RNA sequence: GGGAACGACUCGAGUAGAGUCGAAAAGCAACGGGAGGGAGGCCGGAAGGGCGAACCGGCCAAACGCGCACCAUGGAAAGAGCACAAAAAGAAGUUGAAGUGCUCACAACUUCACCCUCCCAACAAACCAUACCAUAGCUUUCGAGCUAUGGUAUGGAAAAGAAACAACAACAACAAC
Reactivity to 2A3 in 0.01 (KOAc 150mM, MgCl2 10mM, bicine 150mM(pH8.5), 24C), signal-to-noise 2, nucleotides 027 to 126: g030c020a030a100c100g000g010g010a010g030g010g000a060g020g020c030c000g050g000a070a040g120g040g040c040g040a020a020c000c010g020g000c000c000a050a050a000c070g000c020g010c030a040c020c020a070u090g070g040a080a110a080g000a020g000c020a010c000a060a130a030a030a010g180a040a020g040u070u040g060a210a010g000u020g020c000u020c010a030c000a020a020c020u060u050c010a090c000c000c010u000c000c000c000a000a000c010a000a010a000
Reactivity to DMS in 0.01 (KOAc 150mM, MgCl2 10mM, bicine 150mM(pH8.5), 24C), signal-to-noise 2, nucleotides 027 to 126: g030c110a100a140c180g050g010g000a030g010g000g020a220g000g020c000c030g000g010a060a090g050g040g060c100g000a070a170c000c000g000g010c000c030a000a050a030c140g010c010g000c050a140c010c050a080u000g010g060a050a050a070g010a030g000c000a030c040a050a040a070a080a020g000a040a040g000u000u000g000a140a130g020u000g000c050u000c060a120c110a010a030c070u020u000c040a200c030c000c000u000c000c000c010a000a020c090a020a040a100
Structure probing data (2A3 and DMS) for a 177-nucleotide construct. For DMS the reverse transcriptase was MarathonRT. For 2A3, 3,331 sequencing reads were counted. For DMS, 1,163 sequencing reads were counted. Values cover nucleotides 27 to 126. The RNA was probed in 150 mM KOAc, 10 mM MgCl2 and 150 mM bicine (pH 8.5) at 24 C.